RNA sequence: GGGAACGACUCGAGUAGAGUCGAAAAAUGGUGAAUGCAUGGGGAACUACAUCUGUGUCGCGAGUUCGAUUCUCGCCAGGGCCUGGUCCUGUAGCUCAGUUGGUAGAGCAAGCUGUUCCCCGGACACAAAAUCCAGCUAGGUUCGCCUAGCUGGAAACUAGUGUUAACUGUUCGCAGUUAACACUAGAAAAGAAACAACAACAACAAC
Reactivity to DMS in 0.01 (KOAc 150mM, MgCl2 10mM, bicine 150mM(pH8.5), 24C), signal-to-noise 3, nucleotides 027 to 156: a120u000g020g020u020g000a080a030u000g030c050a180u010g010g000g010g040a080a060c030u000a070c070a060u000c080u000g000u000g030u010c020g010c020g010a040g040u000u000c050g000a300u000u010c000u000c010g030c040c020a050g000g020g000c020c110u020g060g000u000c020c030u000g000u000a070g000c010u000c040a100g020u000u020g030g000u000a080g000a060g020c010a130a150g030c030u000g020u000u000c000c000c010c000g020g010a080c090a070c060a070a050a080a100u000c020c000a030g010c000u000a000g020g010u000u000c300g030c030c010u000a000g020c000u020g000g000a000a010a040
Reactivity to 2A3 in 0.01 (KOAc 150mM, MgCl2 10mM, bicine 150mM(pH8.5), 24C), signal-to-noise 4, nucleotides 027 to 156: a010u160g050g030u070g060a150a060u120g080c120a090u120g000g000g000g010a020a010c020u080a040c110a140u120c040u030g060u020g080u190c010g000c000g000a000g000u000u000c000g000a000u000u010c000u000c010g000c000c010a010g000g000g030c040c190u230g100g020u020c000c000u000g000u010a000g000c000u010c010a060g010u150u130g090g130u190a000g000a000g010c000a010a000g030c020u010g000u010u000c010c000c000c000g000g020a010c010a000c000a020a090a000a020u000c000c000a000g000c010u000a000g000g050u030u040c190g050c060c010u000a000g000c000u000g000g000a000a000a000